[RMDB]
RNA sequence: GGGAACGACUCGAGUAGAGUCGAAAACUCUGCCUUGGAUGGGGAGAUAGUCACUGUAGGUUGCACUCGCCGCUGCAGGGUCGUGCCUUCCUCUAUCUGGUAGUUGUGUUUGCACACAGUGUCCAGCACCCUGCGGAUAGUUCGCUAUCCGCAGGGUAAAAGAAACAACAACAACAAC
Reactivity to DMS in 0.01 (KOAc 150mM, MgCl2 10mM, bicine 150mM(pH8.5), 24C), signal-to-noise 1, nucleotides 027 to 126: c040u000c000u000g010c020c080u000u020g050g010a040u010g000g010g000g010a080g000a090u000a110g000u030c030a010c010u000g030u000a080g010g030u030u000g010c060a100c080u000c080g030c020c040g040c060u000g000c080a020g000g010g000u000c050g010u000g000c030c030u000u000c040c020u000c060u030a130u000c020u000g010g020u010a160g000u000u000g010u000g000u000u010u000g020c300a070c010a060c030a000g030u000g000u020c020c020a090g000c300
Reactivity to 2A3 in 0.01 (KOAc 150mM, MgCl2 10mM, bicine 150mM(pH8.5), 24C), signal-to-noise 1, nucleotides 027 to 126: c010u000c000u040g060c010c000u100u180g110g060a130u120g010g000g010g010a020g000a070u120a030g020u070c050a010c120u070g150u270a080g000g110u080u050g000c020a020c020u040c030g170c050c000g000c060u080g000c030a050g080g000g000u020c020g030u050g030c000c010u050u070c020c000u070c020u040a160u120c010u020g050g000u030a050g080u040u030g010u050g010u010u190u290g000c140a000c000a000c000a020g000u060g080u020c010c010a000g080c040
The record gives the reactivity of an RNA of 177 nucleotides to DMS and 2A3.
The DMS profile rests on 1,269 reads.
The 2A3 profile rests on 1,299 reads.
2A3 adducts were read by reverse transcription with SuperScript II with manganese.
DMS adducts were read by reverse transcription with MarathonRT.
The reactions ran in a buffer of 150 mM KOAc, 10 mM MgCl2 and 150 mM bicine (pH 8.5), at 24 C.